This 177-nucleotide RNA was probed chemically with DMS and 2A3.
It was measured as part of the RMDB library OK2TST.
For 2A3, 1,650 sequencing reads were counted.
The reactions ran in a buffer of 150 mM KOAc, 10 mM MgCl2 and 150 mM bicine (pH 8.5), at 24 C.
Values are in units of 0.01, from 0 to 300, in steps of 10.
2A3 adducts were read by reverse transcription with SuperScript II with manganese.
[RMDB]
RNA sequence: GGGAACGACUCGAGUAGAGUCGAAAAAUGAGGGUACCGAGACCUCCUCCAAGGAGGCCCACGAUGAACACGGGUCUCAGGCCGUAGACGAACUGGCUGUACACAUCCUGGCCGAAGGUGGUGGUCCUGUCUUUAACCCAUUCGUGGGUUAAAGACAAAAAGAAACAACAACAACAAC
Reactivity to DMS in 0.01 (KOAc 150mM, MgCl2 10mM, bicine 150mM(pH8.5), 24C), signal-to-noise 3, nucleotides 027 to 126: a050u010g000a070g040g000g000u010a120c060c080g000a160g010a040c010c000u000c010c010u010c040c060a140a140g040g020a060g020g000c010c010c020a100c240g000a140u010g030a100a140c190a090c160g000g000g010u000c020u000c030a150g000g010c040c040g040u000a060g010a130c110g000a080a090c090u000g020g000c070u000g010u030a070c090a120c060a040u000c030c030u000g010g020c020c020g030a110a070g000g000u000g010g010u000g020g010u000c000c100
Reactivity to 2A3 in 0.01 (KOAc 150mM, MgCl2 10mM, bicine 150mM(pH8.5), 24C), signal-to-noise 2, nucleotides 027 to 126: a000u210g020a080g040g050g030u050a070c010c040g010a000g030a070c010c000u010c000c000u000c050c010a040a060g160g000a040g000g000c000c000c000a030c050g160a140u230g070a090a020c070a020c100g000g000g020u010c000u020c030a000g030g000c000c030g030u110a070g020a140c090g020a120a020c060u050g030g080c020u070g060u060a020c050a000c010a030u080c020c020u080g000g030c000c000g040a050a000g020g030u040g010g010u000g000g000u000c000c010